[RMDB]
This 177-nucleotide RNA was probed chemically with DMS. Values cover nucleotides 27 to 126. The DMS profile rests on 1,368 reads. The RNA was probed in 150 mM KOAc, 10 mM MgCl2 and 150 mM bicine (pH 8.5) at 24 C. The data come from the RNA Mapping Database (RMDB), library TTRINS.

RNA sequence: GGGAACGACUCGAGUAGAGUCGAAAAGAUAUGGACGCAUGACCCAGCGUGAAGUGGCGUUGAAAUUUUCUAAGUCGGAAACGACUUAGAAAAUGGAGCCACUACACGCUGCAUGCGUCCUAAGUCACUGAGUGUAGAUGUUCGCAUCUACACUCAGAAAAGAAACAACAACAACAAC
Reactivity to DMS in 0.01 (KOAc 150mM, MgCl2 10mM, bicine 150mM(pH8.5), 24C), signal-to-noise 1, nucleotides 027 to 126: g000a040u000a300u000g000g000a000c000g000c000a010u000g000a190c230c300c100a040g020c010g030u010g000a080a030g020u000g000g010c000g000u000u000g030a220a160a010u000u010u020u000c000u000a000a000g020u000c020g000g020a080a150a180c010g010a010c000u000u000a020g010a010a010a000a000u000g000g010a130g000c040c000a000c000u010a030c040a010c020g000c000u000g000c020a000u000g010c030g050u000c000c000u000a000a050g010u000c040a300